[RMDB]
RNA sequence: GGGAACGACUCGAGUAGAGUCGAAAACAAGGAUGUGGUGGAACUCCUGCAGACGUCGUUGAAGCGCGUGAACGUGAAGGUGAAGGUGGUGGCGCUGUGCAACGACACCGUCGGAACGCUGGUGACGUGCACGUAUGGUAUUCGUACCAUACGUGCAAAAAGAAACAACAACAACAAC
Reactivity to 2A3 in 0.01 (KOAc 150mM, MgCl2 10mM, bicine 150mM(pH8.5), 24C), signal-to-noise 3, nucleotides 027 to 126: c050a040a050g090g020a060u050g040u050g040g060u030g020g030a030a030c030u010c050c010u020g010c000a040g040a100c040g030u050c010g000u040u080g060a080a000g010c010g000c040g060u110g080a060a010c050g060u080g120a110a060g080g030u100g070a040a010g080g050u080g020g060u070g060g000c020g000c030u040g050u060g050c030a030a010c030g020a020c000a020c010c020g010u040c020g020g050a090a040c090g000c060u020g030g020u050g010a030c060g030
Reactivity to DMS in 0.01 (KOAc 150mM, MgCl2 10mM, bicine 150mM(pH8.5), 24C), signal-to-noise 5, nucleotides 027 to 126: c100a120a080g010g010a060u000g030u010g000g020u000g000g000a080a110c090u000c020c010u000g020c080a080g010a110c100g000u000c040g020u000u000g000a120a090g010c040g010c040g040u010g010a070a060c070g010u010g020a090a090g010g010u000g010a110a100g000g030u000g010g030u000g000g000c020g020c040u010g010u000g000c070a040a050c020g010a060c030a070c060c060g010u010c060g010g010a070a090c110g010c040u000g000g010u000g010a100c100g010